The data come from the RNA Mapping Database (RMDB), library OK3TST. This 207-nucleotide RNA was probed chemically with DMS and 2A3. The RNA was probed in 150 mM KOAc, 10 mM MgCl2 and 150 mM bicine (pH 8.5) at 24 C. For DMS, 2,279 sequencing reads were counted.
RNA sequence: GGGAACGACUCGAGUAGAGUCGAAAAGGUUUCCUGGGCAACUUCUCCCUCGUAUUCCGAGUCUUUAUUUUUGUGGUCGAGAACUACCAGUCUUCCGGGACCCGAUUGCCUCCUUAUAGAAAUUCCAUAUUUCUCAGGUAGAGAAACGGAAACAGAAGCCAUUAUGUAAUUUCGAUUACAUAAUGGCAAAAGAAACAACAACAACAAC
Reactivity to DMS in 0.01 (KOAc 150mM, MgCl2 10mM, bicine 150mM(pH8.5), 24C), signal-to-noise 1, nucleotides 027 to 156: g000g040u010u000u000c030c030u010g000g040g000c020a060a030c050u000u010c060u000c030c030c020u000c060g050u000a160u000u000c020c000g000a140g040u000c030u000u000u000a050u050u000u000u000u010g030u000g000g030u000c010g100a080g000a080a060c040u000a140c030c030a090g020u000c080u000u000c050c010g020g000g010a140c040c000c070g000a100u000u000g000c010c070u000c040c040u010u000a110u020a090g000a050a080a150u000u000c040c020a230u000a170u000u000u000c000u010c070a110g030g010u020a120g010a010g030a050a070a050c060g000g000a040a050a180c050a140g000a150a230
Reactivity to 2A3 in 0.01 (KOAc 150mM, MgCl2 10mM, bicine 150mM(pH8.5), 24C), signal-to-noise 3, nucleotides 027 to 156: g030g010u020u040u050c010c000u050g000g010g000c050a060a010c050u090u050c030u060c060c000c000u020c020g030u060a160u120u030c070c020g040a050g040u000c060u060u290u100a200u090u170u070u080u130g070u030g010g000u030c010g010a000g010a210a030c030u090a100c090c000a010g020u020c020u090u010c020c000g040g020g010a050c000c000c000g020a060u030u150g050c030c000u040c020c020u130u080a130u000a120g090a000a100a010u130u030c060c000a040u090a080u250u070u000c000u000c010a070g200g000u240a050g020a010g040a050a010a000c070g020g040a040a020a010c040a050g300a280a000